RNA sequence: GGGAACGACUCGAGUAGAGUCGAAAAGAUAUGGAAUCACAAGAGCGCAGAUAUACGUGUCGGAAACGACACCGUAUGUAGCUUGUGAUUCCUAAGUCAAAUCGGCUGUCGUUCGCGACAGCCGAAACCUAUACUUGGCGUUCGCGCCAAGUAUAGGAAAAGAAACAACAACAACAAC
Reactivity to 2A3 in 0.01 (KOAc 150mM, MgCl2 10mM, bicine 150mM(pH8.5), 24C), signal-to-noise 1, nucleotides 027 to 126: g010a000u000a000u040g000g020a000a000u010c010a000c010a000a110g090a090g300c210g060c300a160g160a270u050a000u020a050c000g010u000g020u000c000g000g000a000a000a000c000g020a000c010a000c010c060g000u000a000u020g200u060a050g010c010u000u000g010u000g010a000u000u030c000c000u000a010a000g000u010c030a020a040a280u050c010g000g000c000u010g000u020c000g020u060u100c290g010c020g040a010c020a000g000c000c010g000a010a000a000
Reactivity to DMS in 0.01 (KOAc 150mM, MgCl2 10mM, bicine 150mM(pH8.5), 24C), signal-to-noise 3, nucleotides 027 to 126: g010a010u000a020u010g000g000a010a010u020c000a000c000a030a130g010a160g040c200g030c300a110g000a150u010a300u000a010c000g020u000g010u040c000g000g000a010a020a010c010g030a000c000a000c300c200g010u000a010u000g040u010a030g030c000u000u010g020u000g000a020u000u000c020c000u000a010a060g000u010c000a090a110a190u000c000g020g000c010u000g020u000c010g010u010u010c280g020c000g010a030c000a010g000c000c000g010a000a020a080

Chemical mapping of a 177-nucleotide RNA with 2A3 and DMS. Conditions: 150 mM KOAc, 10 mM MgCl2 and 150 mM bicine (pH 8.5), 24 C. The DMS profile rests on 2,258 reads. 2A3 adducts were read by reverse transcription with SuperScript II with manganese.